[RMDB]
RNA sequence: GGGAACGACUCGAGUAGAGUCGAAAACGGGGCCGUCUGCGGGUUCCUCGCGCUGGUCGGGUUCGCGUAUCUGGGCGUUCGGACGUUCCGGCCGGCUCCGGCAGCGGUCGAACCGGCCCCGAGUCCGGAUCCGUGGGCCGUCGUCGUCGCACGGCGGGCCGUAGCUAAAAUUCGUUUUAGCUACGGCAAAAGAAACAACAACAACAAC
Reactivity to 2A3 in 0.01 (KOAc 150mM, MgCl2 10mM, bicine 150mM(pH8.5), 24C), signal-to-noise 2, nucleotides 027 to 156: c000g030g000g020g020c010c000g040u150c080u140g010c010g040g000g000u080u020c030c030u030c010g230c020g000c040u120g030g110u100c040g020g000g010u160u190c050g010c040g030u110a120u120c040u100g030g020g020c030g030u160u220c160g220g130a020c010g030u200u200c020c000g010g030c000c020g010g000c030u010c010c020g030g030c010a010g030c010g030g010u030c010g000a010a000c010c010g010g010c000c000c000c020g000a030g020u000c030c020g000g070a080u040c030c010g000u010g000g020g000c010c000g000u010c000g010u020c010g060u040c010g000c050a020c010g010g000c000g000g010
Conditions: 150 mM KOAc, 10 mM MgCl2 and 150 mM bicine (pH 8.5), 24 C. The record gives the reactivity of an RNA of 207 nucleotides to 2A3. For 2A3, 1,234 sequencing reads were counted.